[RMDB]
RNA sequence: GGGAACGACUCGAGUAGAGUCGAAAACUGCCGCCGGGACGCAGUGAUCCUCGCAGGGUCGCACGGUCGCCUCGGGUCGGCCUCGUGUCGGCUCGACCUUCGAGGGGAGCGAGUGGCGAGCCCGACCAAAACUUUCUCGCCUUCGGGCGAGAAAGAAUCAGACUACAAGGUUCGCCUUGUAGUCUGAAAAAGAAACAACAACAACAAC
Reactivity to 2A3 in 0.01 (KOAc 150mM, MgCl2 10mM, bicine 150mM(pH8.5), 24C), signal-to-noise 2, nucleotides 027 to 156: c010u040g050c050c060g080c040c020g070g030g080a020c030g010c010a040g020u000g000a060u000c010c000u010c010g060c110a100g030g040g000u040c050g000c010a030c030g100g070u050c080g200c050c020u000c000g030g000g020u030c000g000g040c010c020u060c100g300u270g130u100c030g010g000c110u080c060g020a040c000c010u150u120c040g010a040g010g020g010g020a030g040c030g010a060g040u120g080g000c010g000a040g100c020c020c000g020a040c020c010a010a090a020a020c000u000u000u000c000u000c010g010c010c010u020u030c200g050g000g000c000g000a000g010a000a000a000g000a000a010
Chemical mapping of a 207-nucleotide RNA with 2A3. 2A3 adducts were read by reverse transcription with SuperScript II with manganese. For 2A3, 1,021 sequencing reads were counted. Reactivities are given for positions 27 through 156.